RNA sequence: GGGAACGACUCGAGUAGAGUCGAAAAACAUAGGUUGGGCCAUUGGCGCUGCGGUUCAUCAUCUUGCCCUCGCCAGGACCGCUCCCGUUCUACUACUUGGCGUCGCGGAUACCGGGUUGGAAAACAACAAACGUAUAUGGUUCGCCAUAUACGUUUGAAAAGAAACAACAACAACAAC
Reactivity to 2A3 in 0.01 (KOAc 150mM, MgCl2 10mM, bicine 150mM(pH8.5), 24C), signal-to-noise 2, nucleotides 027 to 126: a000c040a060u200a040g020g130u070u080g060g010g030c000c080a110u000u090g050g000c060g020c120u040g010c030g020g020u110u070c020a100u020c000a030u020c130u100u100g020c020c000c000u000c010g010c000c010a010g040g010a030c010c010g010c040u020c000c010c000g030u060u030c040u040a150c020u010a020c020u030u070g020g000c020g000u010c020g010c040g060g020a030u040a080c000c020g000g000g050u070u040g070g030a070a070a040a030c060a020a010
Reactivity to DMS in 0.01 (KOAc 150mM, MgCl2 10mM, bicine 150mM(pH8.5), 24C), signal-to-noise 6, nucleotides 027 to 126: a080c130a090u010a080g010g020u000u010g010g000g010c020c030a110u000u000g010g000c020g010c180u000g020c090g010g000u000u010c070a070u000c140a050u000c090u000u000g000c020c010c010u000c040g010c020c030a050g010g000a060c040c020g000c050u000c020c020c020g000u010u000c050u000a100c070u010a060c060u000u000g000g020c040g010u000c060g010c060g000g000a080u010a080c050c020g000g000g010u000u000g010g010a070a040a070a070c140a070a140
Chemical mapping of a 177-nucleotide RNA with 2A3 and DMS. Values cover nucleotides 27 to 126. Conditions: 150 mM KOAc, 10 mM MgCl2 and 150 mM bicine (pH 8.5), 24 C. The DMS profile rests on 9,258 reads. DMS adducts were read by reverse transcription with MarathonRT. The 2A3 profile rests on 3,834 reads. 2A3 adducts were read by reverse transcription with SuperScript II with manganese.